[RMDB]
RNA sequence: GGGAACGACUCGAGUAGAGUCGAAAAGCUGUGCCUAGGUAAGCCUAUAUCUGGGCGCACUACACGCACUAUGUCGCAUCAUGGUCCGUGUGAACUCGAAGCUUGAUGCGACAAGUUUUGAGUGAUCUCAGACACUAUAGGCUUAGUUCGUGAGAGCCCUCGUAAAUAUGUUCGCAUAUUUACGAGGAAAAGAAACAACAACAACAAC
Reactivity to DMS in 0.01 (KOAc 150mM, MgCl2 10mM, bicine 150mM(pH8.5), 24C), signal-to-noise 2, nucleotides 027 to 156: g010c000u000g020u000g010c000c000u000a100g010g010u010a020a080g010c020c020u010a070u000a040u000c020u000g010g020g000c070g040c040a020c010u000a120c020a010c060g010c120a060c020u000a110u010g020u000c050g030c110a110u000c010a030u000g000g010u000c020c000g030u000g000u000g010a130a140c030u000c010g000a020a040g010c010u000u000g000a080u000g030c080g000a080c000a010a000g020u000u000u010u000g010a060g010u000g000a170u000c020u000c010a070g010a080c130a100c140u000a070u000a030g010g010c030u000u000a070g000u000u000c050g040u000g020a210g010a160g000c120
Reactivity to 2A3 in 0.01 (KOAc 150mM, MgCl2 10mM, bicine 150mM(pH8.5), 24C), signal-to-noise 8, nucleotides 027 to 156: g040c060u030g040u080g050c000c010u020a040g030g020u020a030a020g010c010c020u030a030u000a020u060c000u000g000g000g000c000g000c000a000c000u140a060c020a010c030g150c000a010c000u090a160u300g000u010c020g020c040a020u020c010a010u070g130g020u080c050c020g030u060g050u100g220a090a070c050u020c060g030a050a030g060c000u010u000g010a010u040g030c010g040a020c000a000a000g000u010u010u030u100g030a010g010u010g050a050u020c000u010c010a010g020a030c050a020c110u050a010u010a030g000g000c000u030u030a060g080u130u050c060g040u080g080a110g010a020g040c010